The record gives the reactivity of an RNA of 177 nucleotides to 2A3 and DMS. For 2A3, 6,174 sequencing reads were counted. The data come from the RNA Mapping Database (RMDB), library TTRDEL. Reactivities are given for positions 27 through 126. For DMS, 3,409 sequencing reads were counted.
RNA sequence: GGGAACGACUCGAGUAGAGUCGAAAAGAUAUGGACUCGUGGAAUCAGCGACGAAGUCGGAAACGACAGAGCUGUGGCCAUAGAGUCCUAAGUCAAAGUGACAUUAGUCUUCGGACUAAUGUCACAACCAAAAGUAAUCCUUCGGGAUUACUUUUGGAAAAGAAACAACAACAACAAC
Reactivity to 2A3 in 0.01 (KOAc 150mM, MgCl2 10mM, bicine 150mM(pH8.5), 24C), signal-to-noise 3, nucleotides 027 to 126: g020a020u060a010u160g000g000a010c000u000c010g010u010g020g000a050a120u100c020a010g020c000g300a300c060g030a300a000g000u000c000g000g010a060a080a020c010g000a000c000a010g030a010g000c010u010g040u130g150g010c010c000a040u130a220g020a000g000u020c000c000u010a110a010g010u020c040a090a060a090g000u000g000a000c000a010u000u000a000g000u000c000u040u090c300g060g010a000c010u010a000a000u020g000u000c010a000c000a000a000
Reactivity to DMS in 0.01 (KOAc 150mM, MgCl2 10mM, bicine 150mM(pH8.5), 24C), signal-to-noise 4, nucleotides 027 to 126: g000a030u000a300u010g000g010a010c000u000c010g000u010g000g000a140a070u000c010a010g000c010g000a160c180g000a090a120g000u000c000g010g000a090a070a220c000g010a010c000a030g000a260g010c000u000g030u000g000g000c010c000a000u000a080g040a010g000u000c000c000u000a000a070g010u000c030a090a070a150g010u000g000a030c000a010u000u000a000g000u000c010u000u010c210g030g000a010c000u000a010a010u000g000u000c000a000c000a050a170